RNA sequence: GGGAACGACUCGAGUAGAGUCGAAAAACGUACCUAUUCGUAGGUACGUGAUUAAAUGCUAGUCAUAUAAAAGGAAGACUAGCAAUAUAGAAUCCUAUAUUAAUAGCACAUGUUUCGACAUGUGCAACUUACAGCCUUACUUCGGUAAGGCUGUAAGAAAAGAAACAACAACAACAAC
Reactivity to 2A3 in 0.01 (KOAc 150mM, MgCl2 10mM, bicine 150mM(pH8.5), 24C), signal-to-noise 2, nucleotides 027 to 126: a000c000g000u000a000c000c020u010a010u010u070c250g050u010a010g020g020u010a000c000g010u020g010a000u020u070a080a060a000u020g000c000u000a000g020u020c040a040u150a020u090a300a260a080a000g180g080a120a100g000a050c000u000a000g000c000a000a000u050a000u010a000g070a030a030u030c000c000u070a080u030a070u300u200a160a220u090a080g040c010a000c010a000u000g010u050u120u070c190g050a020c000a000u000g000u000g040c010a000a000
Reactivity to DMS in 0.01 (KOAc 150mM, MgCl2 10mM, bicine 150mM(pH8.5), 24C), signal-to-noise 1, nucleotides 027 to 126: a010c000g000u010a000c000c000u000a000u000u000c180g050u000a000g010g010u000a000c010g000u000g000a070u020u000a060a070a060u000g010c000u000a000g010u010c000a110u000a180u000a060a070a130a070g000g010a130a180g000a000c000u000a010g000c000a000a010u000a060u000a080g000a090a100u000c000c000u000a050u030a160u000u000a090a100u010a120g010c000a030c090a010u000g000u000u000u020c190g000a070c000a000u000g020u000g010c010a000a060

This 177-nucleotide RNA was probed chemically with 2A3 and DMS. The RNA was probed in 150 mM KOAc, 10 mM MgCl2 and 150 mM bicine (pH 8.5) at 24 C. For DMS, 1,003 sequencing reads were counted. For 2A3 the reverse transcriptase was SuperScript II with manganese. Reactivities are given for positions 27 through 126. The data come from the RNA Mapping Database (RMDB), library M2PK50.